[RMDB]
RNA sequence: GGGAACGACUCGAGUAGAGUCGAAAAGUGAGUACCGCGCUUCGGUGCGGCCGGUACGGAUCCGGCAGGCCCAUGGCCAUGCGCAGCGGGGGACGGAUGAACACCUCGAAGGACACCAGCGCGCUGAACCUCACACUUAUUUCGAUAAGUGUGAGGUAAAAGAAACAACAACAACAAC
Reactivity to DMS in 0.01 (KOAc 150mM, MgCl2 10mM, bicine 150mM(pH8.5), 24C), signal-to-noise 4, nucleotides 027 to 126: g020u020g010a180g030u010a030c040c000g010c120g000c020u000u040c080g030g020u000g000c020g010g000c030c020g000g020u010a070c090g010g010a050u030c010c000g020g010c020a090g020g010c020c000c150a090u050g020g000c000c010a090u040g010c030g000c040a100g010c020g010g010g000g010g000a190c040g010g010a070u020g000a090a120c110a090c030c030u000c030g020a170a090g030g000a120c030a060c030c030a120g020c020g010c040g000c030u010g000a140
Reactivity to 2A3 in 0.01 (KOAc 150mM, MgCl2 10mM, bicine 150mM(pH8.5), 24C), signal-to-noise 5, nucleotides 027 to 126: g130u100g060a030g030u030a040c020c010g050c040g020c070u100u110c130g050g060u040g040c020g020g000c010c010g010g000u030a050c060g030g010a010u040c020c000g010g030c040a060g000g070c000c020c030a080u180g030g000c030c000a070u130g020c050g000c090a140g040c040g010g010g000g000g020a030c040g060g050a080u120g060a110a030c080a080c030c000u020c020g050a100a070g040g000a010c010a030c030c030a010g020c010g000c000g020c030u040g040a040